Notes: Chemical mapping of a 207-nucleotide RNA with 2A3. The RNA was probed in 150 mM KOAc, 10 mM MgCl2 and 150 mM bicine (pH 8.5) at 24 C.

[RMDB]
RNA sequence: GGGAACGACUCGAGUAGAGUCGAAAAGGAGCUCGAGUUGUUCUUAGCUGAACUAAGGGCAACUGUAUGUUCUUAAGCUGUUUAAGGGCAUAUAGUAGUGUGUAGUUCAGCUACACAUUAUUAAUAGGUUAUAAACAGCUUAUGGCCUGUUCGAGCACGUAAAUACUCGAUUCGUCGAGUAUUUACGAAAAGAAACAACAACAACAAC
Reactivity to 2A3 in 0.01 (KOAc 150mM, MgCl2 10mM, bicine 150mM(pH8.5), 24C), signal-to-noise 3, nucleotides 027 to 156: g120g000a060g030c010u010c000g010a000g000u000u000g000u000u000c000u000u010a010g000c020u010g020a010a030c000u010a010a050g130g100g020c050a080a010c050u010g000u020a010u020g010u020u020c000u010u000a000a000g030c030u000g030u070u010u000a000a010g000g000g000c020a020u000a010u040a050g010u100a170g200u040g030u060g070u210a000g020u010u100c020a010g000c010u000a000c000a000c000a030u130u270a050u090u170a180a060u030a070g020g010u010u010a010u010a020a020a000c020a030g010c000u020u040a010u030g020g000c000c020u000g020u050u080c120g060a050g090c080a010
The data come from the RNA Mapping Database (RMDB), library OK3TST. The 2A3 profile rests on 2,567 reads.